[RMDB]
Structure probing data (2A3) for a 207-nucleotide construct.
RNA sequence: GGGAACGACUCGAGUAGAGUCGAAAAGUAUGGAUGCCACCGUGACGGCUCAAUCACACAAGUGCCCACGAUAACGAGGCGCUCGCUAUUGCUGCGUAACUGACGGCCUGACGGUCUGACGUUACAAAAAACGAAAAGUGGUUCGCCACUUUUCGAACCUAGUUACUGCCUUCGGGCAGUAACUAGGAAAAGAAACAACAACAACAAC
Reactivity to 2A3 in 0.01 (KOAc 150mM, MgCl2 10mM, bicine 150mM(pH8.5), 24C), signal-to-noise 2, nucleotides 027 to 156: g160u140a070u200g010g100a040u070g020c000c050a080c040c020g000u020g050a060c040g020g000c030u030c110a060a090u170c020a000c020a030c050a210a050g020u020g010c000c030c000a030c030g040a040u110a300a000c150g020a100g030g060c030g010c060u080c100g020c030u070a070u150u270g040c040u010g040c050g020u000a000a010c010u000g020a010c000g000g080c050c030u130g180a030c120g010g000u000c000u000g000a030c000g000u010u030a010c000a010a070a000a000a000a000c030g010a000a000a000a000g010u000g020g000u010u030c120g000c050c000a000c030u000u000u030u000c000g000a000a010
It was measured as part of the RMDB library M2RFPK.